This 177-nucleotide RNA was probed chemically with 2A3 and DMS. The reactions ran in a buffer of 150 mM KOAc, 10 mM MgCl2 and 150 mM bicine (pH 8.5), at 24 C.

RNA sequence: GGGAACGACUCGAGUAGAGUCGAAAAGAUAUGGAACGAGAGCUGGGAACUACUCGCAGACGUCGGAAACGACGUGUGCGAGCCCAGUAGUCUCGUUCCUAAGUCAAAAGGUAAGUUCGCUUACCAACUCUUUAACGAAGUUCGCUUCGUUAAAGAGAAAAGAAACAACAACAACAAC
Reactivity to 2A3 in 0.01 (KOAc 150mM, MgCl2 10mM, bicine 150mM(pH8.5), 24C), signal-to-noise 4, nucleotides 027 to 126: g010a020u130a030u200g010g000a000a000c010g000a010g010a000g030c000u030g000g000g010a060a060c090u230a080c000u300c000g000c010a010g010a260c000g020u000c000g030g020a060a080a060c020g010a000c020g000u040g090u000g000c000g000a000g000c010c000c000a000g000u010a000g000u010c000u000c000g000u000u000c000c000u000a000a000g010u000c010a010a060a080a090g010g010u010a010a020g020u050u290c300g040c200u000u000a010c000c010a020a090
Reactivity to DMS in 0.01 (KOAc 150mM, MgCl2 10mM, bicine 150mM(pH8.5), 24C), signal-to-noise 5, nucleotides 027 to 126: g010a040u010a300u000g000g020a010a000c000g020a000g050a250g000c000u000g010g010g000a100a020c070u030a300c020u000c030g010c010a010g000a010c000g010u000c000g000g000a100a110a280c000g010a020c000g020u000g010u000g010c010g000a010g000c000c000c000a000g020u000a050g010u010c000u000c000g000u000u000c000c000u000a020a080g010u010c050a110a070a140a130g000g010u000a000a010g010u000u010c300g020c010u000u000a010c000c000a110a170
The data come from the RNA Mapping Database (RMDB), library TTRDES. For 2A3 the reverse transcriptase was SuperScript II with manganese. For DMS the reverse transcriptase was MarathonRT.